Structure probing data (DMS and 2A3) for a 177-nucleotide construct. As a SHAPE reagent, 2A3 marks flexible, mostly unpaired nucleotides at the ribose 2'-OH.
[RMDB]
RNA sequence: GGGAACGACUCGAGUAGAGUCGAAAAUAAUAUGCAUAUCGAGUUCCCAUGUAUUUUCGUAGCCCUGCGGCAGUAACAUUACAGCUUAGUAAGAAUGCUACCUAACGAUAGCUAGCCGCAGGAUUAACUAAUAGAAAGGGUUCGCCCUUUCUAUUAGAAAAGAAACAACAACAACAAC
Reactivity to DMS in 0.01 (KOAc 150mM, MgCl2 10mM, bicine 150mM(pH8.5), 24C), signal-to-noise 7, nucleotides 027 to 126: u010a080a090u010a080u010g020c060a080u010a090u010c070g010a160g010u000u000c000c000c000a130u000g020u010a040u000u000u000u000c070g010u010a080g000c100c000c000u000g010c000g010g020c000a150g020u000a060a090c150a110u010u000a020c050a140g010c220u010u010a090g010u000a030a030g010a100a090u000g010c010u000a030c060c030u010a080a100c200g010a050u000a040g010c010u000a090g010c000c010g010c000a010g000g000a020u000u000a040a210
Reactivity to 2A3 in 0.01 (KOAc 150mM, MgCl2 10mM, bicine 150mM(pH8.5), 24C), signal-to-noise 3, nucleotides 027 to 126: u080a010a020u120a060u150g040c050a040u100a110u220c070g060a020g070u020u000c030c000c000a010u060g020u010a150u010u150u040u080c080g010u020a020g040c010c000c000u000g000c010g020g000c000a030g020u040a070a050c040a090u030u110a030c020a060g070c060u080u080a050g010u020a060a020g030a180a040u140g030c000u030a040c030c040u080a090a030c070g070a070u040a050g010c010u000a030g000c000c000g000c000a000g020g000a000u000u000a000a000
The data come from the RNA Mapping Database (RMDB), library M2PK90. For DMS, 9,786 sequencing reads were counted. Conditions: 150 mM KOAc, 10 mM MgCl2 and 150 mM bicine (pH 8.5), 24 C.